[RMDB]
RNA sequence: GGGAACGACUCGAGUAGAGUCGAAAACGGAUGGCAACCUCACAGUGCCAUCGAGAGCGUGUUAUGUAAAUUCAGUAACCCUCCUAUGGCGUAAAUGAUGCGCCACUAGCGAAAGAGAAAAGCCAAAUUGCAGAAAGACUUUCGAGUCUUUCUGCAAAAAAGAAACAACAACAACAAC
Reactivity to DMS in 0.01 (KOAc 150mM, MgCl2 10mM, bicine 150mM(pH8.5), 24C), signal-to-noise 3, nucleotides 027 to 126: c030g000g000a040u000g000g020c020a030a050c030c120u020c300a040c240a260g020u020g000c000c000a000u010c000g000a040g020a050g010c150g000u020g000u000u000a030u010g000u020a020a140a170u020u020c050a180g000u000a100a010c020c050c000u000c010c000u000a100u000g010g000c000g070u000a050a120a100u020g000a200u020g000c000g000c040c000a010c120u000a080g010c170g000a070a110a050g000a100g000a070a060a080a130g000c040c080a040a030a150
Reactivity to 2A3 in 0.01 (KOAc 150mM, MgCl2 10mM, bicine 150mM(pH8.5), 24C), signal-to-noise 2, nucleotides 027 to 126: c000g050g000a020u000g000g000c000a000a030c050c020u160c020a070c000a080g020u000g020c000c000a000u000c050g000a050g020a000g000c120g070u290g010u180u100a000u020g020u140a170a140a210u170u130c030a020g090u020a000a000c000c020c000u050c000c000u000a020u020g000g000c000g010u000a000a180a300u300g130a020u210g000c000g000c000c000a060c000u050a000g010c050g070a000a160a000g160a010g070a000a120a010a000g010c010c020a000a020a050